[RMDB]
Chemical mapping of a 177-nucleotide RNA with DMS and 2A3. It was measured as part of the RMDB library OK1LIB. DMS adducts were read by reverse transcription with MarathonRT. Conditions: 150 mM KOAc, 10 mM MgCl2 and 150 mM bicine (pH 8.5), 24 C. For DMS, 3,716 sequencing reads were counted. Values cover nucleotides 27 to 126.
RNA sequence: GGGAACGACUCGAGUAGAGUCGAAAAAUUCAAUUUGGCGUGUGUACAAAGUCAAGAAGUACUACAAACCGUGUUUAGUCCUGAAAAGAAGCGUAGAUUUAGGCGCAAUGUACAAUAUCUCAGCUACCGCUACGAUAAAGUUCGCUUUAUCGUAGCGAAAAGAAACAACAACAACAAC
Reactivity to DMS in 0.01 (KOAc 150mM, MgCl2 10mM, bicine 150mM(pH8.5), 24C), signal-to-noise 3, nucleotides 027 to 126: a050u000u010c090a090a100u010u040u010g040g000c200g010u000g020u030g000u010a020c030a040a150a100g000u040c110a100a090g000a090a060g000u000a010c050u040a010c040a050a030a140c110c060g000u000g020u000u000u000a060g000u030c030c020u020g040a040a080a060a090g000a070a060g000c020g000u010a100g010a100u020u020u010a110g000g000c030g010c080a040a040u020g000u000a020c070a020a080u020a070u010c030u040c010a040g000c070u010a040c130
Reactivity to 2A3 in 0.01 (KOAc 150mM, MgCl2 10mM, bicine 150mM(pH8.5), 24C), signal-to-noise 3, nucleotides 027 to 126: a000u110u110c030a000a050u110u020u150g050g000c070g050u070g070u020g000u030a050c060a090a210a110g080u040c020a000a070g090a100a000g040u030a070c020u000a010c070a050a110a070c040c000g020u010g030u100u110u070a020g010u000c000c010u030g040a050a000a040a090g090a100a000g010c000g020u010a000g060a270u040u070u140a050g010g060c030g000c060a050a050u150g000u020a000c040a080a060u090a060u140c050u030c020a010g000c010u080a060c010